Chemical mapping of a 177-nucleotide RNA with DMS and 2A3. Values cover nucleotides 27 to 126.
[RMDB]
RNA sequence: GGGAACGACUCGAGUAGAGUCGAAAAUUGCAAGCCUUCGGGCUUGCAAGGUGUCGGAAUGCGGAAUAUAUAAUCCUCCGCUUAAGGAUUAUACCGAGUUAAGUGCCAGGCUGUUCGCAGCCUGGAACCAGUGUAGAGGUUUCGACCUCUACACUGGAAAAGAAACAACAACAACAAC
Reactivity to DMS in 0.01 (KOAc 150mM, MgCl2 10mM, bicine 150mM(pH8.5), 24C), signal-to-noise 4, nucleotides 027 to 126: u000u000g000c000a000a010g020c000c000u000u010c190g040g010g020c010u000u000g000c000a000a000g000g010u010g020u000c050g010g000a090a070u010g020c020g020g010a140a070u010a200u000a040u010a050a060u000c080c020u000c110c180g020c160u000u010a090a070g000g000a010u000u000a040u000a050c040c020g000a070g010u000u000a090a100g010u000g010c010c000a010g000g010c000u000g010u000u010c130g020c000a010g010c000c000u000g000g000a020a040
Reactivity to 2A3 in 0.01 (KOAc 150mM, MgCl2 10mM, bicine 150mM(pH8.5), 24C), signal-to-noise 3, nucleotides 027 to 126: u010u010g000c000a000a000g000c010c010u050u060c280g130g030g000c000u020u000g030c000a000a010g000g010u060g040u060c060g010g140a110a030u170g020c030g030g090a090a000u190a000u010a000u030a150a070u030c010c020u030c040c050g070c040u030u080a050a010g000g000a000u010u020a010u060a080c020c020g020a030g050u100u130a150a010g100u090g120c010c000a000g010g000c000u030g010u020u120c180g000c120a000g000c000c000u010g000g010a000a010